[RMDB]
RNA sequence: GGGAACGACUCGAGUAGAGUCGAAAAUGAGAAGUCGUCAGUAGUUCGACGUGAGCAGAAGCGCGCCUCGAUAUGCUAUGUGGACGAGGGCAUGCCCAAGACACACCUUAACCCUAGCGGGACGCAAUUAGCUAUAUUUCUUCGGAAAUAUAGCUAAAAAAGAAACAACAACAACAAC
Reactivity to DMS in 0.01 (KOAc 150mM, MgCl2 10mM, bicine 150mM(pH8.5), 24C), signal-to-noise 7, nucleotides 027 to 126: u010g010a120g010a100a110g020u000c010g010u000c030a090g010u010a070g010u010u000c050g020a030c110g010u010g010a070g010c030a110g000a100a160g020c070g010c030g020c010c020u000c030g010a050u010a070u010g000c020u000a060u000g010u000g010g000a070c060g000a170g010g000g010c060a050u000g000c020c000c040a070a100g000a080c060a050c060a060c060c040u000u000a060a130c020c010c020u000a100g000c100g010g000g000a060c060g010c090a080a110
Reactivity to 2A3 in 0.01 (KOAc 150mM, MgCl2 10mM, bicine 150mM(pH8.5), 24C), signal-to-noise 5, nucleotides 027 to 126: u200g010a050g020a150a030g100u050c020g000u010c020a040g030u050a020g030u080u070c040g020a020c020g030u030g040a030g000c050a030g060a300a060g060c040g000c020g020c050c000u020c020g010a040u020a040u240g020c040u050a040u140g300u080g200g010a060c010g000a030g000g010g020c030a030u100g030c000c000c010a000a010g050a000c010a000c000a020c040c020u060u100a070a100c010c000c010u010a030g020c040g010g010g020a010c040g000c020a020a140

Conditions: 150 mM KOAc, 10 mM MgCl2 and 150 mM bicine (pH 8.5), 24 C. Structure probing data (DMS and 2A3) for a 177-nucleotide construct. DMS adducts were read by reverse transcription with MarathonRT. Source: RMDB library M2PK90, as collected in RNAgym.